Chemical mapping of a 177-nucleotide RNA with DMS and 2A3. Source: RMDB library OK2TRN, as collected in RNAgym. The reactions ran in a buffer of 150 mM KOAc, 10 mM MgCl2 and 150 mM bicine (pH 8.5), at 24 C. For 2A3, 5,400 sequencing reads were counted.

[RMDB]
RNA sequence: GGGAACGACUCGAGUAGAGUCGAAAAACAAAAUAGCUAAUACUGUAGUUAUGUCUAAAACUUUUCACAAUGAAGAAUAUGUAGCACAGUAUUCUAUGUCAGAAAAGGAACAAAGAGGAGGAGGUAGCAACGUACUGUAUUUCGAUACAGUACGUUGAAAAGAAACAACAACAACAAC
Reactivity to DMS in 0.01 (KOAc 150mM, MgCl2 10mM, bicine 150mM(pH8.5), 24C), signal-to-noise 7, nucleotides 027 to 126: a090c070a080a080a100a050u000a020g010c300u000a030a030u000a020c040u000g020u000a100g020u000u000a010u000g010u010c160u000a050a070a120a090c060u000u000u010u000c100a100c280a060a090u020g010a020a010g010a060a070u000a030u000g010u000a030g010c040a050c020a050g000u000a010u000u000c020u000a030u010g010u000c130a100g010a030a040a030a040g000g010a040a040c100a040a070a070g000a060g010g010a070g010g010a040g000g010u010a060g010
Reactivity to 2A3 in 0.01 (KOAc 150mM, MgCl2 10mM, bicine 150mM(pH8.5), 24C), signal-to-noise 5, nucleotides 027 to 126: a000c070a010a140a050a030u050a010g010c040u100a010a020u030a060c020u030g030u070a150g010u150u020a010u050g040u030c040u110a050a070a140a210c030u050u050u140u140c110a100c060a200a200u300g010a020a030g010a030a010u070a020u210g010u020a010g010c010a000c010a030g010u010a000u020u000c010u030a030u050g050u050c010a010g100a030a060a010a020g060g000a020a040c030a060a100a000g060a030g040g020a030g010g020a020g000g020u030a020g030